[RMDB]
RNA sequence: GGGAACGACUCGAGUAGAGUCGAAAAGCAUUACCAGAUCCCUUCACAUAGGACCCAAGAUGAGCUGCAAGUGUGCAUAGAAGAAAUUGUCCGAAACAACAAUGCGAUCAUGCAGGAGGUGGAUCGAAAUCGCCCUGACAUUCGUGUCAGGGCGAUUAAAAGAAACAACAACAACAAC
Reactivity to 2A3 in 0.01 (KOAc 150mM, MgCl2 10mM, bicine 150mM(pH8.5), 24C), signal-to-noise 2, nucleotides 027 to 126: g070c010a030u070u200a140c090c150a060g000a000u000c000c000c000u050u080c120a170c010a070u120a090g080g010a080c100c060c000a100a060g190a080u170g060a000g060c040u010g000c000a160a220g010u040g020u180g000c020a030u080a130g030a210a070g030a150a260a000u120u040g040u000c070c110g000a120a120a000c060a000a000c000a000a040u080g000c010g000a070u030c010a030u080g000c000a030g030g000a000g000g000u130g000g000a030u000c000g000a040
Reactivity to DMS in 0.01 (KOAc 150mM, MgCl2 10mM, bicine 150mM(pH8.5), 24C), signal-to-noise 2, nucleotides 027 to 126: g000c300a150u000u090a060c000c170a110g080a110u020c020c000c000u020u010c050a120c170a170u060a090g010g010a100c020c000c000a240a040g020a060u030g010a050g040c100u020g000c010a000a070g000u030g020u000g000c030a080u000a040g020a230a030g000a130a120a060u000u030g000u000c080c000g000a100a160a120c170a000a000c130a070a000u000g000c280g020a120u020c040a180u050g000c000a030g050g000a040g000g000u000g000g000a050u020c000g000a040